[RMDB]
RNA sequence: GGGAACGACUCGAGUAGAGUCGAAAAACACCAACGCUGGGUCCAUACUCGAGUUUGGUGGAGCCAUCCUGAAGCGCGCACGGGAUGGCUAUGAAGCCAAGAUCGAAAGGUGGACCUGUGCUGAAGCGCGCACGGCAACCGAAAGGUGCGGGGGUAAGUUAAGAUCAAGCUUCGGCUUGAUCUUAACAAAAGAAACAACAACAACAAC
Reactivity to 2A3 in 0.01 (KOAc 150mM, MgCl2 10mM, bicine 150mM(pH8.5), 24C), signal-to-noise 1, nucleotides 027 to 156: a010c060a020c020c010a050a030c010g010c000u010g000g010g010u010c000c010a030u030a180c020u000c030g030a050g010u030u010u000g000g000u000g000g000a000g000c010c000a000u010c000c000u040g030a200a030g000c000g000c000g000c000a010c000g000g000g000a000u020g020g000c020u110a300u010g000a000a000g000c000c000a010a010g060a090u210c010g000a170a030a000g020g010u000g010g000a000c000c010u000g000u010g000c010u020g030a080a050g000c000g000c000g020c020a010c000g010g000c000a010a020c010c010g070a090a030a010g000g020u010g010c010g000g000g030g000g000u040a080a120